[RMDB]
RNA sequence: GGGAACGACUCGAGUAGAGUCGAAAAUGCAUUUUGACCGUCACCGCCCAAGAAGAUUCGACCAAGUGAGCCAACCGAGCGCCCGUUAUAAUCCGGAACACGGAAAGUAUUAACCCCGUCGCCUAACGUGUAGCUACCGCGUAAUUUCGGGUUAGCCUGUAAAGCUACGUUUCGACGUAGCUUUACAAAAAGAAACAACAACAACAAC
Reactivity to 2A3 in 0.01 (KOAc 150mM, MgCl2 10mM, bicine 150mM(pH8.5), 24C), signal-to-noise 2, nucleotides 027 to 156: u140g020c030a010u020u050u050u230g060a110c040c030g020u060c000a050c080c030g050c000c000c030a000a070g040a050a040g020a110u140u090c040g010a060c040c000a100a010g070u020g030a020g080c000c050a060a060c040c010g040a010g020c020g000c000c010c060g000u040u010a050u040a140a050u040c020c010g060g000a050a030c030a000c050g030g020a070a040a000g080u060a070u140u230a090a060c030c000c000c080g020u060c040g020c010c010u050a120a010c040g030u050g000u030a010g000c050u050a060c020c020g030c000g010u060a070a020u040u070u060c020g020g050g000u060u120a040g000c020c000
Reactivity to DMS in 0.01 (KOAc 150mM, MgCl2 10mM, bicine 150mM(pH8.5), 24C), signal-to-noise 2, nucleotides 027 to 156: u000g020c060a140u000u000u000u020g040a100c020c070g050u000c000a110c020c070g020c010c020c040a090a090g000a130a150g030a160u010u000c030g010a080c100c020a020a160g020u010g020a100g010c000c000a070a160c010c010g020a120g000c040g030c030c000c010g050u010u040a070u000a070a160u010c050c010g000g020a080a040c040a040c040g040g000a080a020a140g040u000a180u000u000a070a150c010c020c020c030g040u000c030g010c010c020u010a080a080c040g080u000g010u000a090g010c000u000a080c070c010g040c090g030u000a070a140u000u000u000c020g010g030g010u000u000a050g010c090c030